The record gives the reactivity of an RNA of 177 nucleotides to 2A3 and DMS. Conditions: 150 mM KOAc, 10 mM MgCl2 and 150 mM bicine (pH 8.5), 24 C. Values cover nucleotides 27 to 126. For 2A3, 3,810 sequencing reads were counted.
RNA sequence: GGGAACGACUCGAGUAGAGUCGAAAAAUCGGGGAGUAGCCGCCCUGCAUCCGUUGCAGGGGCUCGCGUCAACACACUUGGCCUGCAGGCCAUGGUGCGAGCAGCUUCCACAGCCUGGCAAGACCUUGCAAAAGAGAUUGUUCGCAAUCUCUUUUGCAAAAGAAACAACAACAACAAC
Reactivity to 2A3 in 0.01 (KOAc 150mM, MgCl2 10mM, bicine 150mM(pH8.5), 24C), signal-to-noise 5, nucleotides 027 to 126: a010u180c070g010g000g000g000a020g010u040a000g030c010c000g000c000c000c000u000g000c000a050u050c110c220g280u210u040g020c000a000g010g000g000g000c000u000c000g000c000g010u040c040a080a030c030a010c030a020c090u020u020g000g010c000c010u280g080c150a160g020g000c010c010a000u010g000g000u000g010c000g000a010g000c000a000g000c000u110u070c080c020a040c030a040g000c000c000u030g030g000c010a010a000g010a040c010c010u010u040
Reactivity to DMS in 0.01 (KOAc 150mM, MgCl2 10mM, bicine 150mM(pH8.5), 24C), signal-to-noise 2, nucleotides 027 to 126: a090u060c170g040g020g000g000a110g000u020a220g010c010c040g080c000c000c000u020g080c000a010u060c230c120g050u030u040g010c000a050g000g010g010g000c000u000c020g040c010g000u000c000a040a240c280a010c150a110c150u030u020g000g000c000c000u000g070c280a160g010g080c040c000a000u010g000g110u000g040c000g010a000g060c020a200g040c090u000u070c130c150a040c300a020g000c020c000u050g000g000c000a110a230g000a070c000c030u000u010